RNA sequence: GGGAACGACUCGAGUAGAGUCGAAAAUUUUCACAGACAUGCAAAAGAGUGUACUUUUGAAGAAUCAAGUAUCGGAAAGUGGAGAUCAUGACCAACAACAACGUCAGAGACGCAGUUGUUGGUCAUAAAUCAAAAUCAGGUUCGCCUGAUUUUGAUUAAAAGAAACAACAACAACAAC
Reactivity to DMS in 0.01 (KOAc 150mM, MgCl2 10mM, bicine 150mM(pH8.5), 24C), signal-to-noise 7, nucleotides 027 to 126: u000u000u000u000c020a050c060a070g010a280c090a070u000g000c150a060a070a100a100g000a180g010u000g020u000a050c030u000u000u000u000g010a080a090g010a090a090u000c090a060a070g010u010a030u010c060g000g000a030a110a090g020u000g010g000a060g000a060u000c180a030u000g010a010c000c000a010a010c010a000a010c000a080a070c010g010u000c020a210g010a190g010a020c000g020c200a090g010u000u000g000u000u000g000g000u000c000a000u000a010
Reactivity to 2A3 in 0.01 (KOAc 150mM, MgCl2 10mM, bicine 150mM(pH8.5), 24C), signal-to-noise 3, nucleotides 027 to 126: u000u010u000u020c000a010c000a010g110a040c020a050u140g090c040a070a070a040a060g060a100g090u170g040u140a120c020u070u130u070u120g110a140a080g060a110a080u150c050a090a000g070u050a060u110c040g040g030a080a050a010g020u030g040g010a030g000a020u110c000a000u050g000a000c000c000a000a000c000a000a000c010a020a000c000g010u020c030a080g050a020g000a270c000g000c050a040g000u010u010g000u000u000g000g030u000c000a000u000a000